[RMDB]
RNA sequence: GGGAACGACUCGAGUAGAGUCGAAAACCCACUUUUUGUGGGUCUAGUAAUCUUACUAGUUGACCAUUGGUUAGAUGAUUAGCAGAUAACCAUGCAAGUUGUCCUAGCCCACACGUCUAUCCGCAAGAUGAUAGCCUGUGUUCGCACAGGCUAUCAUAAAAGAAACAACAACAACAAC
Reactivity to DMS in 0.01 (KOAc 150mM, MgCl2 10mM, bicine 150mM(pH8.5), 24C), signal-to-noise 2, nucleotides 027 to 126: c020c000c000a110c060u000u000u000u000u010g010u000g000g000g020u020c010u000a000g000u020a010a150u040c280u040u000a010c020u000a000g000u000u000g020a100c090c020a180u000u070g010g010u000u020a030g010a110u000g000a260u020u020a210g020c080a030g000a100u030a040a020c120c060a080u020g000c120a090a080g000u000u000g030u010c080c060u030a080g000c030c040c090a080c140a050c250g010u020c040u000a040u020c060c020g000c140a050a100g010
Reactivity to 2A3 in 0.01 (KOAc 150mM, MgCl2 10mM, bicine 150mM(pH8.5), 24C), signal-to-noise 4, nucleotides 027 to 126: c000c020c020a040c030u130u200u050u110u070g010u000g000g010g010u000c000u000a010g000u050a060a150u040c120u160u050a030c010u000a030g100u020u170g070a050c010c000a020u020u110g000g010u000u010a000g010a080u050g000a130u130u210a030g180c010a000g030a070u030a060a020c030c000a020u060g040c060a010a170g020u020u020g010u060c020c000u030a040g000c000c020c000a010c000a020c010g020u000c010u020a070u030c020c000g030c030a030a000g070
The record gives the reactivity of an RNA of 177 nucleotides to DMS and 2A3. The RNA was probed in 150 mM KOAc, 10 mM MgCl2 and 150 mM bicine (pH 8.5) at 24 C. Source: RMDB libraries RFM100 and RFMREP, as collected in RNAgym. Values cover nucleotides 27 to 126.